[RMDB]
Chemical mapping of a 207-nucleotide RNA with 2A3. Values cover nucleotides 27 to 156.
RNA sequence: GGGAACGACUCGAGUAGAGUCGAAAAAUGAAGUUCGCUUCAUCCAACUCCUAAGUCCGAGACAUGCUUGAGGUCAGGCGAAGAACUAUCGGAAACGAUAGGGAGCCUGAUGGAGAGCAACAGCUCGGAUAUGGAAUGCCGCCUUCUUCGGAAGGAAAUGUUGUACUUCCUUCGGGAAGUACAACAUAAAAGAAACAACAACAACAAC
Reactivity to 2A3 in 0.01 (KOAc 150mM, MgCl2 10mM, bicine 150mM(pH8.5), 24C), signal-to-noise 2, nucleotides 027 to 156: a000u020g000a010a020g040u070u150c240g110c140u010u000c020a030u020c050c000a080a050c080u010c000c000u050a140a030g020u000c000c000g000a020g010a090c080a130u060g020c010u020u030g010a050g050g070u010c000a000g000g020c020g160a300a020g030a030a030c000u000a000u000c000g070g050a160a020a020c010g000a010u000a000g010g000g010a000g000c000c010u000g000a000u020g010g010a060g000a000g000c010a010a020c010a010g000c000u010c000g000g000a000u000a010u020g000g010a050a040u140g060c050c060g070c040c000u010u020c000u020u090c300g090g040a000a000g000g050a090a070
It was measured as part of the RMDB library RNAMAK. The RNA was probed in 150 mM KOAc, 10 mM MgCl2 and 150 mM bicine (pH 8.5) at 24 C.